[RMDB]
RNA sequence: GGGAACGACUCGAGUAGAGUCGAAAACGUGCUGUAAACUGAACCAACGGGAUUGCCUCGUGCAGUUCCGGAGUCUUGUUUCGAGACAUCUGCCAGAUGGGGAGUUUGGCUGGGGCGGCAUAUCUGUUACACGACAACGCAGGUGUCCUAAGGCGAGGCAUAUAUAUGAGUUCGCUCAUAUAUAUGCAAAAGAAACAACAACAACAAC
Reactivity to 2A3 in 0.01 (KOAc 150mM, MgCl2 10mM, bicine 150mM(pH8.5), 24C), signal-to-noise 4, nucleotides 027 to 156: c050g050u060g000c020u060g080u200a080a110a130c070u090g070a050a050c030c020a050a050c030g000g000g000a000u010u020g010c010c010u190c190g130u300g000c010a000g000u000u000c000c000g010g010a020g010u000c050u030u090g030u040u100u060c060g000a020g010a020c000a040u020c010u010g020c010c020a070g020a200u070g010g000g000g040a070g030u030u150u060g060g000c070u060g000g000g010g030c020g000g000c030a040u060a050u100c040u050g070u080u060a050c100a010c060g120a030c030a100a010c070g000c010a000g000g020u020g010u000c020c020u080a070a030g050g000c030g010a050g080
Reactivity to DMS in 0.01 (KOAc 150mM, MgCl2 10mM, bicine 150mM(pH8.5), 24C), signal-to-noise 2, nucleotides 027 to 156: c030g020u000g010c020u010g020u010a070a120a170c070u000g010a040a080c040c020a080a170c010g000g000g010a030u000u000g020c010c030u010c190g000u000g010c090a020g020u000u000c000c010g000g000a080g020u000c030u000u010g000u000u000u010c030g010a080g010a020c010a060u000c030u000g000c030c040a090g030a110u000g010g010g040g010a090g020u010u010u010g010g030c050u000g000g000g020g020c020g040g010c060a070u000a040u010c070u000g000u000u010a060c070a110c090g010a070c050a020a120c120g020c010a050g030g020u000g010u010c010c020u000a020a070g010g020c020g000a110g020